[RMDB]
RNA sequence: GGGAACGACUCGAGUAGAGUCGAAAACACGUACUUCGAUGGCUUCGUCAGCCUUACGCAACUUAACUUCAACGAUACCUUCACCGGCCUUCUUACCAACCGUGACACGGACUGGCAAACCAAUCAAGUCUGAAUCGUUAAACUUAACACCGGCACGCGCAUGUUGCGAAUUCGUUCGCAACAUGCGAAAAGAAACAACAACAACAAC
Reactivity to 2A3 in 0.01 (KOAc 150mM, MgCl2 10mM, bicine 150mM(pH8.5), 24C), signal-to-noise 2, nucleotides 027 to 156: c060a000c020g020u110a060c060u150u100c110g050a090u050g020g010c060u070u160c000g130u040c000a030g020c040c000u050u080a020c050g080c160a160a050c100u040u170a090a000c010u210u080c100a120a090c050g130a050u190a300c000c000u090u140c070a050c060c030g000g000c000c000u130u090c000u060u050a000c020c020a020a000c000c000g140u050g060a000c020a000c200g130g000a120c130u000g000g060c030a080a000a000c030c010a000a000u020c000a040a040g100u010c000u120g020a060a000u000c000g060u020u120a190a000a060c020u050u080a050a000c070a030c060c030g090g000c130a010c040g000

An RNA of 207 nucleotides, treated with 2A3 and read out base by base. The RNA was probed in 150 mM KOAc, 10 mM MgCl2 and 150 mM bicine (pH 8.5) at 24 C. For 2A3, 447 sequencing reads were counted. 2A3 adducts were read by reverse transcription with SuperScript II with manganese.